[RMDB]
RNA sequence: GGGAACGACUCGAGUAGAGUCGAAAAAUCUGGUCGUCGUGCCCGAAUUGGCAUAUCCGACUUAUGACGUCGGCGCCCGCCUGGCCGGAACGCGGGUGCUGCGUGCGGAUGCGCUGACCCAGCUGGGCCUACUGACAGGUUUCGACCUGUCAGUAGGAAAAGAAACAACAACAACAAC
Reactivity to 2A3 in 0.01 (KOAc 150mM, MgCl2 10mM, bicine 150mM(pH8.5), 24C), signal-to-noise 2, nucleotides 027 to 126: a000u020c030u000g030g060u030c020g000u000c030g020u100g080c010c000c000g040a070a150u090u140g010g040c020a010u020a010u080c020c000g050a010c130u180u130a170u270g070a030c010g010u200c100g040g000c010g010c010c010c000g000c000c030u090g100g020c090c000g070g060a060a010c070g010c010g030g000g000u000g050c020u020g010c010g010u030g040c000g020g000a010u020g000c020g000c040u010g030a040c000c010c000a020g080c050u210g010g060g020
Reactivity to DMS in 0.01 (KOAc 150mM, MgCl2 10mM, bicine 150mM(pH8.5), 24C), signal-to-noise 2, nucleotides 027 to 126: a060u000c030u000g020g000u000c040g020u000c080g020u010g000c010c000c030g010a090a170u000u010g000g000c020a040u000a040u000c020c000g000a200c200u000u010a100u000g020a010c030g010u010c040g030g010c030g020c000c010c010g000c000c120u010g010g060c050c040g000g010a090a080c280g000c010g000g000g010u010g000c000u000g000c020g010u000g010c000g010g010a050u000g010c080g000c020u000g000a100c030c010c010a110g000c100u000g000g000g010